[RMDB]
RNA sequence: GGGAACGACUCGAGUAGAGUCGAAAAGACAGUGGCAUAGGUUGGGGGGUGGUCCGACAUAGCCUCGGCGUACGUCGGGAGGCCCGACAAGAGGUCCCUUGUGAUGUCGGGUGGGGCCACAAGCCUGAUCCAAUGUCAUCUUCGGAUGACAUUGGAUAAAAGAAACAACAACAACAAC
Reactivity to DMS in 0.01 (KOAc 150mM, MgCl2 10mM, bicine 150mM(pH8.5), 24C), signal-to-noise 2, nucleotides 027 to 126: g000a100c180a060g000u000g000g010c040a100u080a080g010g010u030u010g000g000g000g000g010g000u020g030g000u000c000c000g020a020c030a100u010a160g010c000c000u020c270g000g000c000g000u000a130c140g000u000c020g000g000g020a120g000g010c000c000c000g000a000c040a050a080g010a210g010g000u010c020c040c060u000u000g010u010g000a100u010g000u000c000g000g000g020u000g000g000g000g000c000c000a030c050a040a030g000c030c040u020g000
Reactivity to 2A3 in 0.01 (KOAc 150mM, MgCl2 10mM, bicine 150mM(pH8.5), 24C), signal-to-noise 3, nucleotides 027 to 126: g040a010c150a080g070u020g020g050c060a070u120a300g010g100u120u040g010g040g040g010g030g040u080g020g010u020c000c040g010a020c010a110u080a060g000c010c000u070c090g110g010c040g060u300a100c110g020u010c000g000g010g020a030g020g020c000c000c000g000a000c000a010a040g050a010g070g110u090c010c020c000u030u090g140u080g050a080u050g000u030c000g000g000g010u050g000g010g030g000c000c000a010c010a020a000g040c000c060u140g010

An RNA of 177 nucleotides, treated with DMS and 2A3 and read out base by base. For 2A3 the reverse transcriptase was SuperScript II with manganese. Conditions: 150 mM KOAc, 10 mM MgCl2 and 150 mM bicine (pH 8.5), 24 C. For DMS the reverse transcriptase was MarathonRT.